RNA sequence: GGGAACGACUCGAGUAGAGUCGAAAAGAUAUGGAACUCUCGAUAAGCUGUGUAUCGGAAACGAUACCAGCUUUUGACGAGAGAUUCCUAAGUCAAAGUCACUUUCAAGUUCGCUUGAAAGUGACAACUAUGUUCUUGAGUUCGCUCAAGAACAUAGAAAAGAAACAACAACAACAAC
Reactivity to DMS in 0.01 (KOAc 150mM, MgCl2 10mM, bicine 150mM(pH8.5), 24C), signal-to-noise 4, nucleotides 027 to 126: g010a040u000a300u010g000g000a020a020c000u000c000u000c000g010a150u010a040a040g020c000u000g000u010g010u000a000u010c000g000g000a070a070a150c010g000a010u000a000c000c000a000g000c000u000u000u010u010g010a170c080g010a020g000a010g000a140u000u000c000c000u000a040a110g000u000c040a080a100a170g000u000c010a000c000u000u000u000c000a000a010g000u000u010c230g020c000u010u010g010a010a000a000g010u000g010a000c000a010a110
Reactivity to 2A3 in 0.01 (KOAc 150mM, MgCl2 10mM, bicine 150mM(pH8.5), 24C), signal-to-noise 2, nucleotides 027 to 126: g010a020u060a030u110g000g010a010a020c000u000c000u010c000g060a110u070a280a040g000c000u000g060u020g000u300a000u000c000g010g000a050a030a000c010g000a000u000a010c010c000a000g000c050u000u010u020u010g000a000c000g000a000g010a010g000a010u010u020c000c000u000a080a020g050u030c040a080a110a090g000u020c000a010c010u010u010u000c000a010a010g030u020u040c070g060c230u010u000g000a010a010a000g000u010g010a000c000a010a000
This 177-nucleotide RNA was probed chemically with DMS and 2A3. The DMS profile rests on 6,970 reads.